An RNA of 177 nucleotides, treated with 2A3 and DMS and read out base by base. The DMS profile rests on 1,554 reads. The reactions ran in a buffer of 150 mM KOAc, 10 mM MgCl2 and 150 mM bicine (pH 8.5), at 24 C. 2A3 adducts were read by reverse transcription with SuperScript II with manganese. The data come from the RNA Mapping Database (RMDB), library OK1LIB. For DMS the reverse transcriptase was MarathonRT.

RNA sequence: GGGAACGACUCGAGUAGAGUCGAAAACUGAGUUUGGUGCAAGAUUUAGGUUUGUAAUCGUACCAGGGGCGAUGGAUCCUCCAGGACCUCCUGUAACACUACCAGGUGUAAUGGUACCCCCUGAUCCUGAUAAGCCGUGGUUCGCCACGGCUUAUCAAAAAGAAACAACAACAACAAC
Reactivity to 2A3 in 0.01 (KOAc 150mM, MgCl2 10mM, bicine 150mM(pH8.5), 24C), signal-to-noise 2, nucleotides 027 to 126: c070u070g010a050g090u100u150u120g000g070u000g020c010a050a110g050a150u020u130u210a170g080g000u090u120u130g100u090a020a090u000c030g010u000a010c000c000a000g020g000g000g010c080g010a010u150g010g000a110u130c010c090u000c050c000a040g000g060a020c020c040u060c000c000u050g070u090a050a020c040a020c120u100a220c020c060a130g000g020u090g040u000a090a070u070g010g060u110a090c000c030c000c010c040u070g030a000u040c000c000
Reactivity to DMS in 0.01 (KOAc 150mM, MgCl2 10mM, bicine 150mM(pH8.5), 24C), signal-to-noise 2, nucleotides 027 to 126: c020u030g010a170g010u050u080u000g000g070u000g000c020a140a040g010a060u030u020u040a060g000g030u010u010u060g000u020a010a040u010c040g010u020a040c160c000a150g000g000g030g000c000g010a260u010g010g000a070u040c140c050u010c000c000a070g000g000a180c200c020u030c050c000u010g000u020a070a120c080a010c100u000a090c140c080a130g010g000u020g000u000a070a010u060g000g000u010a100c090c070c020c030c000u000g030a180u020c020c050